The record gives the reactivity of an RNA of 177 nucleotides to DMS and 2A3. Reactivities are given for positions 27 through 126. The RNA was probed in 150 mM KOAc, 10 mM MgCl2 and 150 mM bicine (pH 8.5) at 24 C.

[RMDB]
RNA sequence: GGGAACGACUCGAGUAGAGUCGAAAAGUUGACAACAGCGCGGUUCACCGUUGUAAUAGUGACGCUGGAGUGUGUAGUCCGCACGAGACGCCACCCUCCCACAAAAUUUACAAUGUGUAGUAAGGGGUGACCUAACGCUUUUCGAAGCGUUAGGUCAAAAAGAAACAACAACAACAAC
Reactivity to DMS in 0.01 (KOAc 150mM, MgCl2 10mM, bicine 150mM(pH8.5), 24C), signal-to-noise 1, nucleotides 027 to 126: g010u000u000g030a080c130a020a170c060a060g040c150g000c010g010g000u070u000c060a200c030c070g000u030u000g000u000a010a070u000a050g000u000g000a050c300g050c140u000g020g000a060g000u000g000u010g000u010a030g020u030c140c020g000c020a140c120g010a150g000a030c070g010c100c030a000c010c000c070u000c030c000c050a010c140a030a010a000a100u040u060u060a000c110a070a190u000g040u000g010u000a060g060u050a040a070g000g000g000g030
Reactivity to 2A3 in 0.01 (KOAc 150mM, MgCl2 10mM, bicine 150mM(pH8.5), 24C), signal-to-noise 1, nucleotides 027 to 126: g020u010u110g020a050c000a050a010c000a130g020c060g000c110g060g010u010u050c000a000c090c000g050u020u030g000u000a000a000u000a060g060u010g200a110c090g010c040u170g140g000a090g050u070g000u000g000u100a040g000u000c000c000g030c090a090c020g070a150g000a090c000g040c000c000a020c010c000c000u000c040c000c040a000c000a040a060a090a120u090u080u030a020c020a000a000u170g250u000g010u070a000g000u100a000a210g020g000g090g000
For DMS, 1,305 sequencing reads were counted.